[RMDB]
RNA sequence: GGGAACGACUCGAGUAGAGUCGAAAACGUCGAACAGUUCGCUGUUCGACGAAAAAAACCUUUGUGGUACGCUCGAGGAUCAUACGGGACCCAUUGGGUCCGUAUGGGAGAGCAGUACCACUCUGGUAAAAAACGACCGCUGUUCGCAGCGGUCGAAUCUUACAUCGAUCUUCGGAUCGAUGUAAGAAAAAGAAACAACAACAACAAC
Reactivity to 2A3 in 0.01 (KOAc 150mM, MgCl2 10mM, bicine 150mM(pH8.5), 24C), signal-to-noise 1, nucleotides 027 to 156: c030g000u000c000g000a000a000c020a040g020u090u140c130g100c150u000g000u000u000c010g000a000c000g000a000a000a010a000a000a000a010c040c000u020u000u000g010u000g000g050u000a000c000g000c000u020c030g100a300g000g050a000u000c000a010u020a030c040g030g210g080a090c000c000c130a300u300u300g030g000g010u000c010c000g000u000a000u000g000g000g000a020g010a000g000c060a000g000u000a000c000c000a000c000u030c000u010g000g000u060a000a140a140a000a000a000c000g060a000c000c000g000c000u000g050u040u080c260g000c160a010g000c000g000g000u000c000g000a000a010

Description:
Conditions: 150 mM KOAc, 10 mM MgCl2 and 150 mM bicine (pH 8.5), 24 C. An RNA of 207 nucleotides, treated with 2A3 and read out base by base. Reactivities are given for positions 27 through 156. It was measured as part of the RMDB library RNAMAK.